[RMDB]
RNA sequence: GGGAACGACUCGAGUAGAGUCGAAAAGAUAAUAUCUUAUCAGUUAGAUUCACUGCUAACAAAAUUGUUGGUGGUGCUCCUACAUGGUUUAAUGCGUUGCGUGACUUUACGUUAAAGGGUUAUGUUCAAGACUUGUACUUCGGUACAAGUAAAAGAAACAACAACAACAAC
Reactivity to DMS in 0.01 (KOAc 150mM, MgCl2 10mM, bicine 150mM(pH8.5), 24C), signal-to-noise 8, nucleotides 027 to 129: g020a080u000a070a070u000a300u030c070u030u000a010u020c000a080g030u020u000a040g020a060u010u000c000a000c020u020g000c030u000a040a020c040a060a060a080a090u020u010g030u010u010g020g050u010g030g040u000g050c150u020c030c000u000a020c080a110u000g000g000u010u010u010a060a050u010g020c100g000u000u000g000c090g000u000g000a040c010u000u010u000a060c080g030u010u030a060a080a070g020g010g020u000u010a070u050g050u010u000c040a050a080g040
Reactivity to 2A3 in 0.01 (KOAc 150mM, MgCl2 10mM, bicine 150mM(pH8.5), 24C), signal-to-noise 9, nucleotides 027 to 129: g020a030u120a080a050u060a100u090c050u080u070a020u070c040a030g070u090u090a020g000a080u070u050c000a000c000u010g000c000u000a000a020c000a000a150a160a180u280u190g010u000u000g000g010u030g000g010u000g010c030u020c010c000u040a040c040a150u070g060g040u050u100u160a120a000u180g060c110g100u100u110g020c040g020u100g020a030c000u040u050u070a010c010g050u020u180a090a040a070g090g000g010u040u030a120u130g050u070u000c020a060a020g050